[RMDB]
RNA sequence: GGGAACGACUCGAGUAGAGUCGAAAAAAGGGCCACAUGAAUUCUGUUCACAGCAUACGCUUUAUAUUAAGGAUGGCGACGAUGGUUACUUCCUUCCUUAUCCAGACCCUUCAAGAAUUUUGUCUGCGCAACUGCCCGUUCGCGGGCAGUAAAAGAAACAACAACAACAAC
Reactivity to DMS in 0.01 (KOAc 150mM, MgCl2 10mM, bicine 150mM(pH8.5), 24C), signal-to-noise 4, nucleotides 027 to 129: a030a070g040g010g020c000c000a040c130a170u080g050a120a090u020u040c110u040g040u000u000c080a130c110a170g080c050a100u080a140c120g040c050u000u030u050a060u050a080u000u000a110a040g000g000a000u000g000g010c120g050a060c040g010a060u060g020g010u000u000a100c080u000u000c000c080u000u080c030c030u000u060a050u030c000c000a000g010a070c000c000c000u000u040c120a070a070g030a090a100u010u030u040u020g000u010c060u080g030c140g030c190a060
Reactivity to 2A3 in 0.01 (KOAc 150mM, MgCl2 10mM, bicine 150mM(pH8.5), 24C), signal-to-noise 3, nucleotides 027 to 129: a000a000g080g020g000c070c000a040c030a040u140g050a040a020u090u010c040u050g050u040u020c040a040c000a060g020c000a040u050a090c060g000c040u110u030u110a130u070a040u100u150a050a000g060g000a020u010g010g000c010g000a010c020g070a070u070g030g020u050u050a070c000u010u020c020c000u020u010c010c000u030u020a000u030c000c000a010g020a030c000c000c000u040u030c070a080a010g000a120a140u040u050u090u060g010u000c000u050g010c050g010c030a060